[RMDB]
RNA sequence: GGGAACGACUCGAGUAGAGUCGAAAACGUGCCUUCAUGCUAAGGGUUUGAUAUCUGCUAAAACCCGGUGCAUUCAUCAAUGCAGGUUAAGCCAAAGGGAUGUCCCGACCGGAGGGCGACAAUCCAGAUAGCUCAAGAAUGUUCGCAUUCUUGAGAAGUGAUCUUAAGCCUUCGGGCUUAAGAUCACAAAAGAAACAACAACAACAAC
Reactivity to 2A3 in 0.01 (KOAc 150mM, MgCl2 10mM, bicine 150mM(pH8.5), 24C), signal-to-noise 2, nucleotides 027 to 156: c050g030u110g070c000c030u150u140c030a100u150g000c030u100a090a140g000g000g010u050u000u000g020a010u030a060u020c010u010g030c040u030a000a000a050a050c000c010c000g000g000u000g000c000a010u040u150c020a090u090c050a100a120u110g000c000a000g010g070u070u130a040a010g000c000c020a090a000a000g020g000g030a000u070g020u040c000c000c000g030a050c000c000g000g030a040g050g010g010c000g000a020c030a050a050u040c050c000a010g000a090u070a040g050c000u000c000a000a000g000a000a000u000g010u090u060c190g030c090a000u020u000c000u000u000g000a000g000a010a000
Reactivity to DMS in 0.01 (KOAc 150mM, MgCl2 10mM, bicine 150mM(pH8.5), 24C), signal-to-noise 1, nucleotides 027 to 156: c100g010u000g060c000c030u000u000c100a200u020g020c070u040a300a210g060g000g040u000u000u000g010a210u000a070u000c010u030g080c080u000a180a020a070a060c030c000c000g000g060u000g010c000a020u000u000c040a070u000c090a100a270u030g000c020a040g040g020u000u000a060a060g040c050c070a040a150a120g010g050g010a110u000g000u000c000c000c000g020a240c050c080g020g000a090g000g000g030c030g000a110c040a060a090u010c070c030a110g000a120u000a080g070c000u000c010a020a050g000a070a000u000g000u000u000c190g020c000a000u000u000c000u000u000g000a000g010a040a150

This 207-nucleotide RNA was probed chemically with 2A3 and DMS. The RNA was probed in 150 mM KOAc, 10 mM MgCl2 and 150 mM bicine (pH 8.5) at 24 C. Values cover nucleotides 27 to 156. It was measured as part of the RMDB library M2RFPK.